[RMDB]
RNA sequence: GGGAACGACUCGAGUAGAGUCGAAAAUUCCUCUUCUUCCUCUUGGCUGAGGCGCUUUCCUCCUCCGGCCAGCUGCUUCUUCUUGUUCUCCAGGGCCUUCCUUCUUCUGUGCUCCUGCCUCUCCUUGCUACACCCCGCUUCGGCGGGGUGAAAAGAAACAACAACAACAAC
Reactivity to DMS in 0.01 (KOAc 150mM, MgCl2 10mM, bicine 150mM(pH8.5), 24C), signal-to-noise 3, nucleotides 027 to 129: u050u000c000c000u020c130u000u000c070u040u040c000c000u040c060u000u000g050g030c070u040g050a080g020g040c250g050c140u010u030u000c060c010u020c000c000u010c000c000g050g040c010c050a110g030c030u000g060c070u000u020c030u030u030c100u010u000g000u040u020c000u040c060c060a210g000g000g000c000c000u000u070c050c000u010u020c010u020u010c040u060g030u040g030c060u020c030c000u030g010c080c010u000c000u030c000c040u000u010g040c090u050a000
Reactivity to 2A3 in 0.01 (KOAc 150mM, MgCl2 10mM, bicine 150mM(pH8.5), 24C), signal-to-noise 2, nucleotides 027 to 129: u050u010c010c000u040c000u050u010c010u060u030c000c000u040c020u120u070g100g000c040u050g070a050g060g000c040g000c050u070u090u030c010c020u000c020c000u050c000c020g000g000c000c000a050g020c030u040g010c000u010u000c010u030u030c010u040u120g030u100u000c060u050c040c010a050g030g010g030c000c000u040u020c020c000u030u050c000u040u020c040u070g110u060g030c000u020c000c000u000g040c000c000u000c000u000c000c010u000u000g010c000u050a020